Chemical mapping of a 207-nucleotide RNA with 2A3 and DMS. The reactions ran in a buffer of 150 mM KOAc, 10 mM MgCl2 and 150 mM bicine (pH 8.5), at 24 C. The 2A3 profile rests on 7,482 reads. The data come from the RNA Mapping Database (RMDB), library PDB130. For 2A3 the reverse transcriptase was SuperScript II with manganese.
[RMDB]
RNA sequence: GGGAACGACUCGAGUAGAGUCGAAAACAAGCCUGCUUGAGACUGUUCCUAUUGCGGGACUGUUUGGGGGAAACCCUGGCCUAGAGAUCCCAUGUCCUAUUGUGCGUGGGACAUGGGUGACAGAAAAGUUACCACAGGGAUAACUGGCUUGUAGCAGCUUCUGUUAAUACUUCGGUAUUAACAGAAGAAAAGAAACAACAACAACAAC
Reactivity to 2A3 in 0.01 (KOAc 150mM, MgCl2 10mM, bicine 150mM(pH8.5), 24C), signal-to-noise 7, nucleotides 027 to 156: c020a020a000g030c000c010u040g040c040u050u080g060a020g020a090c030u050g030u050u020c010c000u050a210u050u260g070c080g010g010g030a030c020u030g030u120u160u150g040g000g000g000g050a030a040a040c010c010c000u010g030g020c010c020u070a070g010a030g010a120u040c010c010c000a000u000g000u000c000c010u010a040u070u210g150u170g170c130g030u030g010g010g000a000c000a000u000g000g000g000u000g000a000c010a000g140a040a110a040a010g050u080u060a090c030c010a040c040a080g030g000g000a040u070a110a060c040u030g010g000c000u010u030g040u030a030g040c040a020g020
Reactivity to DMS in 0.01 (KOAc 150mM, MgCl2 10mM, bicine 150mM(pH8.5), 24C), signal-to-noise 3, nucleotides 027 to 156: c060a080a090g030c060c010u000g010c040u000u000g010a060g000a110c030u010g030u000u000c010c010u010a060u010u000g030c010g030g010g010a050c060u000g020u000u000u000g010g040g020g050g020a160a090a200c010c010c010u000g000g030c040c060u010a130g020a180g010a210u000c000c000c000a020u000g000u000c010c010u000a050u000u010g040u010g010c160g050u010g000g010g010a020c000a020u010g000g010g020u000g000a250c050a110g000a090a130a090a110g010u000u000a060c040c010a150c040a060g000g020g000a110u000a040a060c030u000g000g010c000u000u020g010u000a060g010c060a120g000